Conditions: 150 mM KOAc, 10 mM MgCl2 and 150 mM bicine (pH 8.5), 24 C. The record gives the reactivity of an RNA of 207 nucleotides to 2A3 and DMS.
RNA sequence: GGGAACGACUCGAGUAGAGUCGAAAAGCAGGUAUCGUCACGCUGGACGUUACGGAAGCGAGUCGGUAAAGAUGGGCAAGCGGCUGGAUAAGAGCUUAAUAUUCGCGUCUUCAGUAUUCGCCACGACACAAUUCUCUUCUCAGGCUGACCGCUUGCGCGCCUAGACAUAGUUCGCUAUGUCUAGGCGAAAAGAAACAACAACAACAAC
Reactivity to 2A3 in 0.01 (KOAc 150mM, MgCl2 10mM, bicine 150mM(pH8.5), 24C), signal-to-noise 4, nucleotides 027 to 156: g050c070a020g060g080u050a040u080c010g050u030c020a020c090g060c070u170g070g040a030c010g030u050u070a020c030g030g040a020a000g040c010g030a030g000u030c020g020g030u080a120a090a040g060a060u110g020g050g000c000a010a010g000c000g030g010c020u030g040g000a050u040a070a050g010a010g030c050u060u120a100a010u090a140u270u170c030g000c000g050u010c000u130u000c040a030g030u090a150u020u160c050g010c040c030a080c100g070a030c020a020c040a110a070u110u010c030u000c000u050u000c050u000c020a020g190g000c050u040g030a120c000c000g010c020u000u020g000c020g000
Reactivity to DMS in 0.01 (KOAc 150mM, MgCl2 10mM, bicine 150mM(pH8.5), 24C), signal-to-noise 2, nucleotides 027 to 156: g010c110a090g010g000u010a040u000c020g020u010c030a080c090g180c070u000g020g000a080c030g010u000u000a060c090g030g010a170a110g030c010g010a100g000u000c030g020g020u010a040a040a150g020a070u010g010g050g010c040a040a030g000c010g020g020c000u000g020g000a100u020a070a070g010a110g000c200u000u010a050a120u000a110u000u000c020g010c000g000u030c020u010u000c050a260g010u000a160u000u000c040g030c040c010a110c030g010a050c120a070c090a040a080u000u000c000u000c020u000u000c080u000c040a040g010g000c000u000g000a040c020c000g010c010u000u000g000c060g020